Structure probing data (2A3) for a 177-nucleotide construct.

RNA sequence: GGGAACGACUCGAGUAGAGUCGAAAAUGUGCUCAGAAAAAUGAGCCAAAAGACUGUGGAUCUUUCCAAAGCAGCUGCUGGGAUGGGAUUCAUCAAUAAGCAUAUGCUUACGGGCAACAUCUUGGCAAUUGCCCCUCCGGUUCGCCGGAGGGGCAAUAAAAGAAACAACAACAACAAC
Reactivity to 2A3 in 0.01 (KOAc 150mM, MgCl2 10mM, bicine 150mM(pH8.5), 24C), signal-to-noise 1, nucleotides 027 to 126: u280g050u160g000c000u000c000a000g170a040a300a000a000a000u020g000a000g000c000c000a000a170a000a000g130a050c020u020g040u090g100g070a060u020c090u000u180u000c020c110a040a040a040g010c000a000g010c010u070g010c000u020g070g000g000a000u010g010g050g050a010u000u110c000a070u220c140a150a140u100a050a000g000c000a050u070a000u300g010c000u000u000a040c100g000g000g040c090a010a000c000a010u000c000u000u040g000g150c040a050
2A3 adducts were read by reverse transcription with SuperScript II with manganese. The 2A3 profile rests on 335 reads.